The record gives the reactivity of an RNA of 177 nucleotides to 2A3 and DMS. For DMS the reverse transcriptase was MarathonRT. The data come from the RNA Mapping Database (RMDB), libraries RFM100 and RFMREP.
RNA sequence: GGGAACGACUCGAGUAGAGUCGAAAAGUACCACCAUCGGUGGUUAUGGCGCUUACCCCGUGAGGGGGGCUUGGGGAACCGAGUCUAGCGUUGUUAUAAGAAAUCAAUCUUUUGGAUCCAGCCAGGGUAUUCUUCUAUCCUUCGGGAUAGAAGAAUAAAAAGAAACAACAACAACAAC
Reactivity to 2A3 in 0.01 (KOAc 150mM, MgCl2 10mM, bicine 150mM(pH8.5), 24C), signal-to-noise 6, nucleotides 027 to 126: g050u030a020c000c010a000c010c010a250u170c210g030g000u020g010g010u040u060a060u090g040g000c000g000c010u020u150a070c000c010c000c000g060u090g060a140g000g000g010g010g000g000c000u010u010g010g000g000g070a040a060c000c000g010a010g010u000c040u060a020g000c020g010u010u040g070u060u090a160u050a120a070g080a070a060a020u120c060a030a040u040c020u050u070u050u100g050g010a030u030c010c000a020g080c030c030a040g010g060g030
Reactivity to DMS in 0.01 (KOAc 150mM, MgCl2 10mM, bicine 150mM(pH8.5), 24C), signal-to-noise 4, nucleotides 027 to 126: g010u010a060c020c000a070c040c030a100u020c180g000g050u000g010g000u010u020a020u000g000g000c040g020c010u010u000a150c010c000c000c010g030u080g000a210g010g010g010g000g000g030c000u000u010g000g010g000g060a150a170c010c010g020a010g030u000c010u030a040g020c030g000u000u000g000u020u010a040u030a080a090g000a080a070a070u020c130a110a110u010c020u000u000u010u000g020g000a110u000c000c020a070g000c100c040a080g000g010g020